[RMDB]
RNA sequence: GGGAACGACUCGAGUAGAGUCGAAAAGUUUCUGAUGGAUAUCCGCUGCCGAAACCCACACAAGUGGUGAGGAGUGGAUUUCGAGGAAACCGACCGCUUUAUACUAUUUUUUCUAUUACAAUCAUAGAAUUUUUAAGAUUGUAUCUCGAUGGACGUCAGAGAUGUAUGAUUUCGAUCAUACAUCUCUAAAAGAAACAACAACAACAAC
Reactivity to 2A3 in 0.01 (KOAc 150mM, MgCl2 10mM, bicine 150mM(pH8.5), 24C), signal-to-noise 1, nucleotides 027 to 156: g000u000u000u000c010u030g080a130u170g070g070a010u040a030u060c010c000g020c000u100g300c040c000g060a140a090a030c070c070c000a030c020a020c020a240a120g010u060g080g010u060g020a010g000g000a010g000u000g000g000a000u010u000u010c000g000a000g010g000a000a000a000c000c000g030a030c000c040g100c110u100u190u090a170u100a040c020u010a240u110u080u120u050u050u160c010u090a150u240u070a040c000a050a040u120c010a030u100a140g100a250a140u290u140u160u300u250a130a030g010a030u000u070g060u020a040u100c080u050c040g020a030u140g110g040a030c020g070u070c100
Description:
The record gives the reactivity of an RNA of 207 nucleotides to 2A3. The reactions ran in a buffer of 150 mM KOAc, 10 mM MgCl2 and 150 mM bicine (pH 8.5), at 24 C. It was measured as part of the RMDB library OK3TST.